[RMDB]
RNA sequence: GGGAACGACUCGAGUAGAGUCGAAAACGAGCUACCAGUAAGAAGUAGAGGAAGCCGAUGUUCCGUCGUACGUUUUGAAAAACGAACCAGGGAGUGUGUCUGAUUGGCGAGUCUAACCUGAUUAUCACUCAUACGAAGCAUUCGUGCUUCGUAUGAGAAAAGAAACAACAACAACAAC
Reactivity to DMS in 0.01 (KOAc 150mM, MgCl2 10mM, bicine 150mM(pH8.5), 24C), signal-to-noise 5, nucleotides 027 to 126: c070g000a130g000c010u010a060c020c020a090g030u020a060a100g020a110a110g010u010a060g000a130g000g010a070a050g000c020c040g010a060u020g000u010u000c030c010g000u020c160g020u020a080c030g000u000u020u000u030g010a060a060a080a080a050c030g000a060a060c050c070a090g000g020g000a080g000u020g020u000g010u000c020u000g000a070u010u010g010g000c030g000a090g010u000c030u010a040a180c020c010u010g020a100u030u040a100u020c140a150
Reactivity to 2A3 in 0.01 (KOAc 150mM, MgCl2 10mM, bicine 150mM(pH8.5), 24C), signal-to-noise 6, nucleotides 027 to 126: c020g010a010g020c020u120a080c000c010a030g040u090a080a080g030a120a010g030u090a030g010a040g090g040a060a000g010c020c020g040a060u030g050u070u050c040c000g040u040c030g030u050a060c010g010u000u020u040u120g160a120a040a030a010a000c020g010a010a010c030c010a030g030g030g020a050g020u110g010u040g020u020c030u070g060a140u080u070g020g000c030g010a010g000u000c010u010a050a060c000c000u030g050a080u040u140a080u140c040a020
Source: RMDB libraries RFM100 and RFMREP, as collected in RNAgym. This 177-nucleotide RNA was probed chemically with DMS and 2A3. Values cover nucleotides 27 to 126. The RNA was probed in 150 mM KOAc, 10 mM MgCl2 and 150 mM bicine (pH 8.5) at 24 C.